[RMDB]
Source: RMDB library OK1LIB, as collected in RNAgym. Chemical mapping of a 177-nucleotide RNA with DMS and 2A3.
RNA sequence: GGGAACGACUCGAGUAGAGUCGAAAAAUUAAAUCGACUCCUUCAAUCAUUCACGGAACGAAGGAUCUCUUUACGAGAUUAAGCCAAUUGCGUAUAGACCCCAAACGACAAUGGUAUUUUGUCACCGCAACGACUAAGGGUUCGCCCUUAGUCGUUGAAAAGAAACAACAACAACAAC
Reactivity to DMS in 0.01 (KOAc 150mM, MgCl2 10mM, bicine 150mM(pH8.5), 24C), signal-to-noise 3, nucleotides 027 to 126: a090u090u030a020a080a060u010c060g000a000c030u000c000c030u000u020c020a050a300u000c000a070u000u080c150a120c260g010g000a090a050c300g010a100a000g020g000a030u000c020u010c010u000u000u000a100c160g000a030g020a020u000u020a060a150g010c030c020a000a020u060u010g020c000g050u000a100u000a140g000a240c050c020c000c020a000a050a040c070g000a070c040a030a030u010g000g020u030a120u000u010u000u040g000u000c000a070c130c130g020
Reactivity to 2A3 in 0.01 (KOAc 150mM, MgCl2 10mM, bicine 150mM(pH8.5), 24C), signal-to-noise 6, nucleotides 027 to 126: a000u190u140a020a040a050u110c040g040a020c000u030c010c000u040u010c010a020a140u040c030a110u190u110c090a030c160g080g020a080a030c010g040a000a030g030g000a000u010c000u000c000u040u180u150a130c130g030a010g030a050u090u070a050a030g020c030c000a070a190u080u100g000c010g000u060a040u060a110g080a100c000c000c000c030a040a100a060c030g050a040c000a010a020u050g070g000u090a190u060u090u060u020g030u010c030a000c070c040g020
For DMS, 2,500 sequencing reads were counted.